[RMDB]
RNA sequence: GGGAACGACUCGAGUAGAGUCGAAAAUAUCCGCUGUACGCGUGGGACGGGCCAUUAUUUGGAUAAUGCGUGAUAAGCACCACAAGAAUUGAUUUCCUAUGGAUAUUGUCGGUAGCGUUCGCGUCCAGAAUAAUCUGGCAUUCGUGCCAGAUUAUUCAAAAGAAACAACAACAACAAC
Reactivity to 2A3 in 0.01 (KOAc 150mM, MgCl2 10mM, bicine 150mM(pH8.5), 24C), signal-to-noise 4, nucleotides 027 to 126: u100a030u010c010c000g000c050u070g060u080a020c050g010c030g040u070g010g000g080a030c040g020g060g000c020c000a040u130u130a070u080u220u110g120g010a050u050a160a060u230g020c030g020u030g040a060u040a090a090g020c000a000c000c000a020c020a040a020g080a090a110u170u160g080a090u090u120u080c020c020u100a120u240g030g030a050u020a040u100u070g040u050c090g010g020u030a050g010c040g030u030u030c050g010c020g020u000c020c000a000
Reactivity to DMS in 0.01 (KOAc 150mM, MgCl2 10mM, bicine 150mM(pH8.5), 24C), signal-to-noise 3, nucleotides 027 to 126: u000a080u000c040c020g010c080u010g030u000a060c070g010c050g030u000g000g020g000a050c060g020g000g000c050c030a050u000u000a060u000u010u010g000g010a090u000a060a060u010g000c040g030u000g010a070u010a100a140g010c050a060c030c000a030c040a040a070g000a100a080u010u000g000a120u010u000u000c000c030u010a100u010g020g010a040u000a090u010u000g010u000c110g030g010u010a080g030c030g010u000u010c040g000c030g010u000c040c040a110

This 177-nucleotide RNA was probed chemically with 2A3 and DMS.
For DMS the reverse transcriptase was MarathonRT.
The data come from the RNA Mapping Database (RMDB), library OK2TRN.
The reactions ran in a buffer of 150 mM KOAc, 10 mM MgCl2 and 150 mM bicine (pH 8.5), at 24 C.
Values cover nucleotides 27 to 126.
The 2A3 profile rests on 3,869 reads.